Conditions: 150 mM KOAc, 10 mM MgCl2 and 150 mM bicine (pH 8.5), 24 C.
Structure probing data (DMS and 2A3) for a 177-nucleotide construct.
For DMS, 3,428 sequencing reads were counted.
Source: RMDB library OK2TRN, as collected in RNAgym.
RNA sequence: GGGAACGACUCGAGUAGAGUCGAAAAACGCCAAGCGUGGAGCACACGCCGGCGUCGUCCACUACGGCAACCCCCACACGGGCAGCCGAGCGCAGCCGUUCCUGGUGGACGCGCUGCGCCGUGCCCAGGUUAUUCUCCUGUUCGCAGGAGAAUAACCAAAAGAAACAACAACAACAAC
Reactivity to DMS in 0.01 (KOAc 150mM, MgCl2 10mM, bicine 150mM(pH8.5), 24C), signal-to-noise 4, nucleotides 027 to 126: a010c010g000c010c000a110a180g020c020g030u000g000g000a220g020c230a260c000a010c010g030c020c130g000g000c000g030u000c040g010u000c010c020a080c180u010a130c090g010g010c050a050a150c010c000c000c010c010a160c270a110c190g000g000g010c010a050g000c250c020g010a080g020c000g000c010a010g000c020c000g000u000u000c010c010u010g010g030u010g010g000a020c000g000c230g000c000u000g030c010g020c010c010g000u000g000c010c000c010a110
Reactivity to 2A3 in 0.01 (KOAc 150mM, MgCl2 10mM, bicine 150mM(pH8.5), 24C), signal-to-noise 2, nucleotides 027 to 126: a000c000g000c020c000a050a040g010c010g000u020g000g080a160g140c280a030c010a000c090g040c000c030g000g000c000g000u010c000g020u000c010c020a130c120u160a040c050g060g020c030a030a050c010c020c010c040c010a050c000a000c060g000g000g000c000a000g150c110c020g050a070g040c000g000c000a000g010c000c000g030u020u010c040c020u230g210g030u300g090g010a000c000g010c050g000c010u000g000c000g010c010c000g010u000g000c000c000c000a000